RNA sequence: GGGAACGACUCGAGUAGAGUCGAAAAUCGAAAGUUCGCUUUCGAAAAAAGAUAUGGAACCCUGAGGAGCAUGGAGCAAUGUGGGUCGGAAACGACCCAUGACUCCAUGAACUACUCCUCCUGGUUCCUAAGUCAAAAAUACGGGUUCGCCCGUAAAUAACGAUCAUUGUUUCGACAAUGAUCGUUAAAAAGAAACAACAACAACAAC
Reactivity to 2A3 in 0.01 (KOAc 150mM, MgCl2 10mM, bicine 150mM(pH8.5), 24C), signal-to-noise 2, nucleotides 027 to 156: u030c000g000a000a010a010g040u050u120c190g010c140u020u010u020c000g020a130a000a000a000a000a010g020a020u030a020u040g000g000a000a000c000c010c020u010g000a000g000g000a000g000c010a000u000g000g000a000g000c030a050a030u050g000u010g000g000g000u010c000g020g000a010a010a010c000g000a000c010c010c000a000u010g020a010c000u000c000c000a000u000g000a000a000c010u130a070c000u000c000c000u000c000c010u000g000g000u000u000c000c000u000a000a010g000u000c030a020a020a020a060a090u090a040c000g020g010g030u050u080c240g120c070c000c000g000u040a030a010a030
Reactivity to DMS in 0.01 (KOAc 150mM, MgCl2 10mM, bicine 150mM(pH8.5), 24C), signal-to-noise 1, nucleotides 027 to 156: u000c000g020a010a030a020g060u000u000c300g000c000u000u000u000c000g040a010a170a080a090a060a230g000a070u000a300u020g010g020a020a000c000c020c080u000g010a030g010g020a030g000c000a040u000g030g000a040g050c040a010a110u020g050u000g010g000g040u000c000g060g000a130a150a240c010g060a010c000c000c010a000u000g000a130c010u000c000c000a000u010g020a060a120c050u020a180c000u000c000c000u000c000c020u000g050g060u000u000c000c000u000a000a070g020u020c020a060a100a110a120a140u000a000c020g000g000g060u000u020c190g040c000c000c000g000u020a000a060a110